RNA sequence: GGGAACGACUCGAGUAGAGUCGAAAAGAGCGACAUCGGCGUGAAGUUCGACACGCGCAACUUCCGGCUGGGCUGGGACCCCGUGACCGAGCUGGUGAUGCCGGGCGUGUACACCAACGAGGCCUUCCACCCCGACAUCGUCCUGCUGCCCGGCUGCAGCGUGGUUCAGGUUCGCCUGAACCACGCUAAAAGAAACAACAACAACAAC
Reactivity to 2A3 in 0.01 (KOAc 150mM, MgCl2 10mM, bicine 150mM(pH8.5), 24C), signal-to-noise 1, nucleotides 027 to 156: g010a000g000c000g030a060c030a040u080c060g130g000c030g040u090g150a090a050g060u110u210c070g080a060c120a070c110g070c000g000c050a060a000c000u010u010c050c010g040g000c000u000g010g010g000c000u000g100g020g030a100c000c000c000c250g300u280g020a040c080c050g000a040g080c170u140g160g020u090g000a000u010g000c010c000g000g010g010c130g080u030g000u000a060c160a040c030c000a060a070c120g090a140g050g090c000c050u110u050c110c000a050c010c020c000c000g000a000c000a030u020c000g050u010c020c010u110g270c300u000g010c030c000c000g010g000c000u000g090c000
Chemical mapping of a 207-nucleotide RNA with 2A3. For 2A3 the reverse transcriptase was SuperScript II with manganese. It was measured as part of the RMDB library OK3TST. The 2A3 profile rests on 587 reads.